Source information: Chemical mapping of a 177-nucleotide RNA with 2A3 and DMS. Values are in units of 0.01, from 0 to 300, in steps of 10. Reactivities are given for positions 27 through 126.
RNA sequence: GGGAACGACUCGAGUAGAGUCGAAAAUGUUCUGGACAGUGGGGACUAUGCUGAUGGGCCCUCAGAUAACCCUGGUACAGGUAUUGCUAAGGAGGAGAUUGUGAAAUGCAUUGACUUUCUUAAGAUGCAUCGUUGGUCAUUUCGAUGACCAACGAUGAAAAGAAACAACAACAACAAC
Reactivity to 2A3 in 0.01 (KOAc 150mM, MgCl2 10mM, bicine 150mM(pH8.5), 24C), signal-to-noise 3, nucleotides 027 to 126: u110g010u040u010c000u050g000g110a030c060a110g010u110g070g030g000g060a140c090u050a010u200g050c010u070g020a070u050g000g040g000c010c000c000u010c000a010g000a050u020a040a050c000c000c030u020g030g040u060a070c020a030g050g000u060a100u150u170g140c110u030a050a030g050g000a020g040g000a040g060a030u080u050g020u050g070a090a090a100u110g050c030a010u060u100g100a110c010u000u020u020c000u000u020a070a050g050a080u180g050
Reactivity to DMS in 0.01 (KOAc 150mM, MgCl2 10mM, bicine 150mM(pH8.5), 24C), signal-to-noise 2, nucleotides 027 to 126: u020g000u010u000c000u000g030g000a100c140a110g000u060g010g000g000g000a130c080u020a110u010g050c030u020g000a050u010g000g020g010c080c040c010u010c050a040g000a010u010a010a050c080c020c000u020g000g020u000a030c120a020g000g000u000a070u010u010g040c070u000a040a050g020g000a070g020g050a050g010a050u000u000g010u000g000a000a110a050u000g000c080a070u020u000g000a120c120u010u000u020c020u000u000a110a050g000a140u000g000